The record gives the reactivity of an RNA of 177 nucleotides to 2A3 and DMS. 2A3 adducts were read by reverse transcription with SuperScript II with manganese. For DMS the reverse transcriptase was MarathonRT. The RNA was probed in 150 mM KOAc, 10 mM MgCl2 and 150 mM bicine (pH 8.5) at 24 C. For 2A3, 2,629 sequencing reads were counted. The data come from the RNA Mapping Database (RMDB), library M2PK90. High 2A3 reactivity points to a flexible backbone, as in loops and unpaired stretches.

[RMDB]
RNA sequence: GGGAACGACUCGAGUAGAGUCGAAAAUGAAAUAAAGUGUACCAAAUGGUAGGUACACACCAAGUGUGCGGUGGUCGCACACAACCAGCAGUCAAUAGAGAGUGCAAAACCUAACCAAAGAAAAAAAGAAUGUCCUAAAGUUCGCUUUAGGACAUUCAAAAGAAACAACAACAACAAC
Reactivity to 2A3 in 0.01 (KOAc 150mM, MgCl2 10mM, bicine 150mM(pH8.5), 24C), signal-to-noise 2, nucleotides 027 to 126: u050g010a040a040a000u220a060a110a070g010u000g000u000a000c020c020a030a020a150u190g120g030u080a070g010g000u000a010c000a000c000a000c010c000a140a040g000u000g000u000g020c010g000g140u160g080g140u200c010g020c010a000c000a000c010a010a050c010c010a000g000c010a030g080u050c010a030a010u200a110g160a010g020a020g160u030g000c030a040a000a070a110c000c030u050a000a040c040c030a030a080a060g140a040a100a060a010a000a000a000
Reactivity to DMS in 0.01 (KOAc 150mM, MgCl2 10mM, bicine 150mM(pH8.5), 24C), signal-to-noise 2, nucleotides 027 to 126: u010g000a100a100a090u000a110a050a050g050u000g020u000a010c000c010a080a090a110u030g030g020u040a100g000g010u000a010c040a010c010a130c070c060a110a110g010u020g000u000g000c030g000g010u000g050g000u020c010g030c000a010c010a000c060a110a040c180c080a070g030c020a020g020u000c080a100a090u020a060g030a120g000a030g000u000g000c030a060a050a070a040c040c030u000a070a070c070c070a030a080a150g060a000a000a050a050a070a070a100